[RMDB]
RNA sequence: GGGAACGACUCGAGUAGAGUCGAAAACAGCGUCCUUCUGGUUGAGUGGAACAGGGACUAUCAGCUUAGUCGGCGUUGAUGACAUUUGUGAUGGUCAAGAUACAAAGCAAAGGCGGGCGGUUUAGCCCCUUCAGCUGGCAUUCGUGCCAGCUGAAGGAAAAGAAACAACAACAACAAC
Reactivity to DMS in 0.01 (KOAc 150mM, MgCl2 10mM, bicine 150mM(pH8.5), 24C), signal-to-noise 1, nucleotides 027 to 126: c080a060g000c050g000u000c040c040u000u010c020u020g010g000u000u000g000a150g030u010g000g050a090a170c110a060g010g010g000a050c020u000a040u000c030a070g010c030u010u010a110g010u000c050g000g030c160g020u000u000g040a110u000g000a030c050a110u020u000u000g000u000g020a090u010g010g010u010c030a070a050g010a210u000a030c080a060a130a080g020c060a040a090a130g000g000c150g000g010g000c070g000g010u000u000u000a120g000c040c020
This 177-nucleotide RNA was probed chemically with DMS.
The reactions ran in a buffer of 150 mM KOAc, 10 mM MgCl2 and 150 mM bicine (pH 8.5), at 24 C.
Source: RMDB library OK2TST, as collected in RNAgym.